Structure probing data (2A3 and DMS) for a 177-nucleotide construct.
DMS adducts were read by reverse transcription with MarathonRT.
For 2A3 the reverse transcriptase was SuperScript II with manganese.
Reactivities are given for positions 27 through 126.
The reactions ran in a buffer of 150 mM KOAc, 10 mM MgCl2 and 150 mM bicine (pH 8.5), at 24 C.
RNA sequence: GGGAACGACUCGAGUAGAGUCGAAAAGAAAAGGAGUCGUAUGUUGAAAAACAUGUACUGGAAAAGAAAAGAAAAAGACAUACGACUGAAAACAGUACAUGAAAAAGCAUGGAAACAUGCGAAGAAAGGGAUUACUAAAGUUCGCUUUAGUAAUCCCAAAAGAAACAACAACAACAAC
Reactivity to 2A3 in 0.01 (KOAc 150mM, MgCl2 10mM, bicine 150mM(pH8.5), 24C), signal-to-noise 2, nucleotides 027 to 126: g100a020a100a000a000g160g090a020g000u000c000g000u000a000u010g010u000u020g040a070a030a000a000a000c010a000u000g010u000a000c000u010g010g080a040a160a060a050g170a010a100a010a040g140a030a160a060a100a000g030a010c020a000u000a010c000g010a010c020u010g020a000a020a000a000c000a000g010u000a000c000a010u020g040a050a010a010a010a040g000c000a000u000g010g000a040a010a020c000a000u010g000c010g010a040a000g050a040a040a030
Reactivity to DMS in 0.01 (KOAc 150mM, MgCl2 10mM, bicine 150mM(pH8.5), 24C), signal-to-noise 2, nucleotides 027 to 126: g030a120a050a180a070g000g000a070g000u000c000g070u000a000u000g010u000u000g000a140a080a130a050a110c020a010u000g000u000a020c000u000g000g010a160a120a090a100g000a110a100a190a110g050a100a110a020a060a070g000a000c000a000u010a010c010g000a010c010u000g000a010a000a030a070c000a000g000u000a000c000a010u000g000a090a050a040a090a160g000c010a000u000g000g020a160a100a220c010a000u000g000c010g010a050a090g020a060a140a080